[RMDB]
RNA sequence: GGGAACGACUCGAGUAGAGUCGAAAAGCUAUUCCAGCACCCCAACCUGUAAUUGCCAAGUCCUCUAAGGUACUAAUUUGUAGCUGCUCUGAAGUAAGGAUUUCGGAUUCAGCUGGUAGGGAAAGACGUCAAGGCUAAUGUUCGCAUUAGCCUUGACAAAAGAAACAACAACAACAAC
Reactivity to 2A3 in 0.01 (KOAc 150mM, MgCl2 10mM, bicine 150mM(pH8.5), 24C), signal-to-noise 1, nucleotides 027 to 126: g020c030u030a020u100u070c010c040a000g020c000a060c000c020c000c000a000a010c000c000u050g040u110a050a090u100u040g070c020c000a060a000g010u030c010c010u020c020u060a020a030g020g000u010a020c020u010a010a280u120u070u300g240u090a040g030c040u030g020c030u010c020u140g050a030a000g020u060a120a030g090g040a010u050u010u110c180g000g040a030u090u090c030a010g000c030u030g000g070u050a040g030g000g000a020a140a050g030a020c090
Reactivity to DMS in 0.01 (KOAc 150mM, MgCl2 10mM, bicine 150mM(pH8.5), 24C), signal-to-noise 2, nucleotides 027 to 126: g010c050u000a080u000u000c120c050a300g030c030a250c070c000c010c010a090a090c070c000u010g010u010a030a060u000u000g030c020c030a040a050g010u000c030c000u010c070u000a120a100g010g000u000a050c020u000a050a150u000u000u000g020u020a060g000c110u000g000c300u010c010u000g000a060a050g000u010a120a100g010g000a030u000u000u000c120g010g000a060u000u000c040a080g000c020u000g000g030u000a030g020g010g000a010a030a070g000a050c160